[RMDB]
RNA sequence: GGGAACGACUCGAGUAGAGUCGAAAAGAAGGUAUUGAAGCUGGGAAUUAGGUUUCCGUGCAGAAGGUGGGCAUGACUCAUAAACCCAGGCUUGCACUGAAGUUGCCUAUCUUCCAUUAGGCCCAAAUACCGCACUACUUUUCGAAGUAGUGCGGUAAAAAGAAACAACAACAACAAC
Reactivity to DMS in 0.01 (KOAc 150mM, MgCl2 10mM, bicine 150mM(pH8.5), 24C), signal-to-noise 3, nucleotides 027 to 126: g000a110a060g000g020u000a020u010u000g010a080a230g000c030u010g020g000g000a080a070u010u010a070g010g010u000u000u000c050c080g030u000g040c030a070g010a050a040g020g050u000g000g010g030c080a190u000g000a120c130u020c160a110u030a040a150a140c030c030c010a040g010g010c080u020u000g020c050a050c030u020g010a040a050g010u000u000g020c000c030u000a010u000c070u000u000c030c040a080u000u020a120g060g000c010c000c020a080a110a200
Reactivity to 2A3 in 0.01 (KOAc 150mM, MgCl2 10mM, bicine 150mM(pH8.5), 24C), signal-to-noise 2, nucleotides 027 to 126: g070a020a000g090g030u150a030u120u170g040a030a030g000c040u070g020g020g010a040a040u090u050a030g070g000u020u030u000c050c000g010u000g000c000a010g020a230a030g140g010u020g030g000g000c050a030u120g050a090c010u020c170a040u110a070a060a000c000c000c000a010g040g060c020u030u030g040c020a010c030u040g000a040a070g050u150u080g020c010c000u050a070u030c070u000u000c010c000a080u070u170a130g080g000c000c010c010a000a000a000
The record gives the reactivity of an RNA of 177 nucleotides to DMS and 2A3. DMS adducts were read by reverse transcription with MarathonRT. It was measured as part of the RMDB library OK2TRN. The reactions ran in a buffer of 150 mM KOAc, 10 mM MgCl2 and 150 mM bicine (pH 8.5), at 24 C. Reactivities are rounded to 0.1 and cut off at 0 and 3.